[RMDB]
RNA sequence: GGGAACGACUCGAGUAGAGUCGAAAAAAAAGAUAUGGACCUAUGACCCUCGCUGCAAUAGCGAAGAACUCUUGUCGGAAACGACAAGAGGGAGCUGGUACGACGAGCAUAGGUCCUAAGUCAAAAACAACUCUUCUAUCUUCGGAUAGAAGAGUUGAAAAGAAACAACAACAACAAC
Reactivity to 2A3 in 0.01 (KOAc 150mM, MgCl2 10mM, bicine 150mM(pH8.5), 24C), signal-to-noise 2, nucleotides 027 to 126: a000a000a020a110g010a000u000a000u040g000g010a010c000c000u010a010u080g110a190c140c030c000u010c020g020c040u050g000c030a210a300u070a300g020c000g200a250a000g050a010a010c000u020c020u000u020g020u010c010g000g010a040a020a010c000g020a010c000a010a000g010a010g010g000g000a010g010c050u050g010g050u100a080c130g300a050c020g020a190g000c000a000u010a030g000g000u010c000c000u000a000a010g010u000c010a000a080a000a080a080
Reactivity to DMS in 0.01 (KOAc 150mM, MgCl2 10mM, bicine 150mM(pH8.5), 24C), signal-to-noise 2, nucleotides 027 to 126: a080a120a120a030g000a040u000a300u000g000g000a060c000c000u000a000u000g010a250c190c230c030u000c020g010c020u000g000c120a040a090u020a000g010c010g010a090a140g000a190a210c000u000c000u000u010g010u010c000g010g010a050a070a060c010g010a030c000a000a000g000a030g000g000g040a030g010c050u010g000g010u000a110c180g030a030c060g000a030g020c010a010u010a000g010g030u000c000c000u000a000a070g000u020c010a110a060a120a120a090